[RMDB]
RNA sequence: GGGAACGACUCGAGUAGAGUCGAAAAAGCGGUCAGGUACGCCUGACCGCAAUGGAGCUGUGGAGUGUGACAAUGGUGUUUGUAUCCAAUCCGUCAAACGCCAUUAUCACACUAAAUAGCUACUGAAGGAUUAAGUAUAUUUCGAUAUACUUAAUCCAAAAGAAACAACAACAACAAC
Reactivity to DMS in 0.01 (KOAc 150mM, MgCl2 10mM, bicine 150mM(pH8.5), 24C), signal-to-noise 7, nucleotides 027 to 126: a100g010c000g020g010u000c010a000g010g010u010a080c250g020c010c000u010g010a010c000c010g010c000a000a010u010g000g010a030g010c000u000g020u000g000g020a090g000u000g010u000g000a010c040a000a010u000g000g020u000g000u000u000u000g000u010a080u020c060c080a120a080u010c270c300g000u010c000a000a000a010c010g010c000c000a000u000u000a030u000c000a000c000a000c000u000a010a040a010u000a000g010c000u010a060c020u000g020a160a140
Reactivity to 2A3 in 0.01 (KOAc 150mM, MgCl2 10mM, bicine 150mM(pH8.5), 24C), signal-to-noise 9, nucleotides 027 to 126: a000g010c000g010g000u000c010a000g010g020u050a040c220g070c020c000u000g010a000c000c000g000c000a000a000u020g010g020a000g000c000u000g000u010g020g040a030g000u000g000u000g000a000c010a010a000u000g000g000u010g010u010u010u010g060u070a090u060c070c060a080a130u110c100c090g060u020c020a000a000a000c000g000c000c000a000u000u000a000u000c000a000c000a000c000u000a000a000a000u000a000g010c000u050a110c020u040g070a110a040
This 177-nucleotide RNA was probed chemically with DMS and 2A3. High 2A3 reactivity points to a flexible backbone, as in loops and unpaired stretches. Reactivities are given for positions 27 through 126. DMS adducts were read by reverse transcription with MarathonRT. It was measured as part of the RMDB libraries RFM100 and RFMREP.